[RMDB]
RNA sequence: GGGAACGACUCGAGUAGAGUCGAAAAGACCUUCAGUUCGCUGAAGGUCGAUGAAGGUAAGAGAGAUUACCAUCUGUUAAGUGAUAUGGAUAAGAUCUCUCAGUGAACGUGCUUUCGAGCACGUUAAUCGAAGACUAUUUUUCGAAAUAGUCUUCGAAAAAGAAACAACAACAACAAC
Reactivity to 2A3 in 0.01 (KOAc 150mM, MgCl2 10mM, bicine 150mM(pH8.5), 24C), signal-to-noise 6, nucleotides 027 to 126: g000a000c000c000u000u000c000a010g010u020u110c140g010c120u000g010a010a000g000g000u000c000g010a000u020g050a060a090g180g040u160a260a020g000a000g000a000g000a010u000u020a040c040c000a000u000c010u040g080u160u130a160a130g150u100g220a090u050a020u200g010g030a040u020a090a090g020a030u000c000u000c000u000c010a000g040u050g100a020a000c000g000u010g010c000u070u050u130c250g050a000g000c000a000c000g000u010u020a010a040
Reactivity to DMS in 0.01 (KOAc 150mM, MgCl2 10mM, bicine 150mM(pH8.5), 24C), signal-to-noise 8, nucleotides 027 to 126: g000a010c000c000u000u000c000a010g010u000u010c240g020c010u000g010a010a010g000g020u000c000g000a040u010g010a130a090g010g010u000a080a120g010a010g010a000g000a030u000u000a100c090c080a040u000c030u000g010u000u010a100a120g020u010g010a100u000a020u010g000g010a080u000a080a110g000a040u000c000u000c000u000c000a160g020u010g010a040a010c000g010u000g000c000u000u000u010c200g010a010g000c000a000c000g010u000u000a030a100

An RNA of 177 nucleotides, treated with 2A3 and DMS and read out base by base.
Values are in units of 0.01, from 0 to 300, in steps of 10.
The 2A3 profile rests on 10,832 reads.
2A3 adducts were read by reverse transcription with SuperScript II with manganese.
The reactions ran in a buffer of 150 mM KOAc, 10 mM MgCl2 and 150 mM bicine (pH 8.5), at 24 C.